[RMDB]
RNA sequence: GGGAACGACUCGAGUAGAGUCGAAAACAACUUAGUGACAAGUGGAAUGGUGUUCACACCUCGUGAUGAACAGCUAAACGGAAUAGGAAACAGUCUGAGCUCGUUGUCACUGAACGAGCCGCCUGAAUAAUCACGGUCAGUUCGCUGACCGUGAUUAAAAAGAAACAACAACAACAAC
Reactivity to 2A3 in 0.01 (KOAc 150mM, MgCl2 10mM, bicine 150mM(pH8.5), 24C), signal-to-noise 2, nucleotides 027 to 126: c050a020a010c040u010u070a000g020u040g020a000c000a100a010g030u060g030g160a140a140u080g110g000u050g080u080u020c030a020c000a010c080c120u170c220g050u030g050a300u010g010a040a030c000a030g110c060u140a120a070a020c050g080g100a080a000u170a130g130g000a010a090a070c010a020g030u000c050u050g080a070g050c000u010c000g000u000u030g020u040c000a020c030u080g040a000a000c000g000a000g000c000c000g020c000c010u050g000a060a020
Reactivity to DMS in 0.01 (KOAc 150mM, MgCl2 10mM, bicine 150mM(pH8.5), 24C), signal-to-noise 2, nucleotides 027 to 126: c060a140a040c060u010u000a010g020u000g010a020c040a070a030g030u000g000g010a110a070u020g000g040u000g010u000u000c050a020c010a040c040c160u000c300g000u000g020a110u000g010a070a030c050a040g010c040u000a030a100a150c090g000g010a050a070u010a060g010g010a080a060a110c060a070g000u020c100u020g030a230g020c000u000c000g000u000u020g000u000c060a030c030u000g000a000a010c000g000a020g000c000c050g020c160c010u010g020a080a100
Annotation
An RNA of 177 nucleotides, treated with 2A3 and DMS and read out base by base. The RNA was probed in 150 mM KOAc, 10 mM MgCl2 and 150 mM bicine (pH 8.5) at 24 C. Values cover nucleotides 27 to 126.